[RMDB]
RNA sequence: GGGAACGACUCGAGUAGAGUCGAAAAGAGUUAGAAAAGGCUUCCGAAAUAAUGUUACUCGUACACGCACGGAAAAGUGACGUGCGUCGGAAGCUCAAGACGACGCAUGUUACUGGAAUUUAAGAAAGGGUAUUUGAUUCUUCGGAAUCAAAUACCCAAAAGAAACAACAACAACAAC
Reactivity to 2A3 in 0.01 (KOAc 150mM, MgCl2 10mM, bicine 150mM(pH8.5), 24C), signal-to-noise 1, nucleotides 027 to 126: g120a000g040u070u160a010g060a080a050a060a000g130g000c040u040u000c000c000g000a020a010a190u110a020a060u030g030u050u030a040c050u010c000g100u100a000c080a010c100g000c050a010c110g100g000a110a000a090a000g000u000g020a010c000g000u000g000c000g000u000c000g000g000a090a000g000c100u030c000a000a000g050a040c000g000a000c020g000c000a010u020g000u000u030a000c000u010g020g030a040a130u070u070u020a160a040g040a170a010a030
Reactivity to DMS in 0.01 (KOAc 150mM, MgCl2 10mM, bicine 150mM(pH8.5), 24C), signal-to-noise 1, nucleotides 027 to 126: g040a190g010u000u050a040g030a120a140a100a070g000g000c000u000u010c000c010g050a150a040a170u060a040a100u060g000u040u000a000c000u000c020g000u000a230c080a040c020g000c010a000c160g000g000a080a050a140a000g000u000g000a000c000g020u000g000c010g000u000c000g000g000a030a050g000c010u010c160a040a160g000a140c030g000a010c000g020c000a000u000g030u000u000a000c050u000g000g000a100a110u050u030u000a110a070g000a040a220a180